[RMDB]
Source information
An RNA of 177 nucleotides, treated with 2A3 and DMS and read out base by base. 2A3 adducts were read by reverse transcription with SuperScript II with manganese. The reactions ran in a buffer of 150 mM KOAc, 10 mM MgCl2 and 150 mM bicine (pH 8.5), at 24 C. Reactivities are given for positions 27 through 126.
RNA sequence: GGGAACGACUCGAGUAGAGUCGAAAAGAAGUGUCGCGGCAGUCGCGUGAUGCUACAUCCACGGUCAGCGGUAGUACCUCGGUCGGCGGGGAGUAGCGUCGGGAGACUAGGCGCGCUUUGCCGUGGGCCGCGUAUGUAGGUUCGCCUACGUACGCGGAAAAGAAACAACAACAACAAC
Reactivity to 2A3 in 0.01 (KOAc 150mM, MgCl2 10mM, bicine 150mM(pH8.5), 24C), signal-to-noise 3, nucleotides 027 to 126: g070a040a010g020u020g060u100c000g000c010g050g010c020a020g030u030c020g000c030g050u010g010a010u020g000c000u000a010c000a090u000c000c000a000c000g010g020u030c010a010g010c000g020g010u000a020g020u050a040c000c000u010c020g000g030u010c010g000g040c020g010g030g000g010a110g000u020a000g000c000g000u000c000g000g080g030a090g000a010c010u040a040g010g000c000g000c000g000c000u030u020u040g010c000c010g000u040g000g020g000
Reactivity to DMS in 0.01 (KOAc 150mM, MgCl2 10mM, bicine 150mM(pH8.5), 24C), signal-to-noise 5, nucleotides 027 to 126: g000a050a060g000u020g010u030c000g000c000g000g000c040a040g000u020c030g000c060g010u000g000a040u000g000c000u000a020c010a090u000c000c000a060c010g000g010u000c060a080g040c220g000g020u000a080g010u030a300c010c000u000c020g030g010u020c020g010g000c070g000g000g000g000a070g020u000a030g010c000g010u000c000g000g000g000a100g000a090c020u020a130g000g000c010g000c020g000c010u010u010u000g010c000c000g010u010g000g000g000

Source information
Values are in units of 0.01, from 0 to 300, in steps of 10.